Conditions: 150 mM KOAc, 10 mM MgCl2 and 150 mM bicine (pH 8.5), 24 C. Chemical mapping of a 177-nucleotide RNA with DMS and 2A3. For 2A3 the reverse transcriptase was SuperScript II with manganese. The data come from the RNA Mapping Database (RMDB), library TTRDEL.

RNA sequence: GGGAACGACUCGAGUAGAGUCGAAAAGAUAUGGACUAAUGCCGAUAAGAAGCUAUCGGAAACGAUAGGCUUCUUUUGACGGGUUAGUCCUAAGUCAAACCGUCAGAGUCUUCGGACUCUGACGGAAGUGGAACUGUAUGUUCGCAUACAGUUCCACAAAAGAAACAACAACAACAAC
Reactivity to DMS in 0.01 (KOAc 150mM, MgCl2 10mM, bicine 150mM(pH8.5), 24C), signal-to-noise 1, nucleotides 027 to 126: g000a020u000a300u010g010g000a050c000u000a000a000u000g010c000c000g010a250u000a010a020g000a010a010g000c000u000a010u000c010g000g010a040a060a100c010g010a000u000a010g030g000c000u000u000c000u000u010u000u010g020a170c080g000g010g030u000u000a000g000u000c000c000u010a000a060g010u000c000a090a180a190c000c000g000u000c000a020g000a020g020u000c010u000u000c200g010g010a010c000u000c000u000g000a000c000g010g010a000a040
Reactivity to 2A3 in 0.01 (KOAc 150mM, MgCl2 10mM, bicine 150mM(pH8.5), 24C), signal-to-noise 1, nucleotides 027 to 126: g010a000u060a020u060g010g000a010c000u030a010a040u290g300c060c020g040a050u100a300a020g000a010a000g010c010u000a000u000c000g050g000a090a050a000c000g000a000u020a000g110g070c030u000u000c020u030u010u020u060g080a020c000g000g000g010u000u000a000g000u000c010c000u000a000a000g000u010c010a070a060a100c010c000g000u000c000a020g000a010g030u000c000u110u190c300g100g000a000c010u000c000u010g000a000c000g000g000a000a010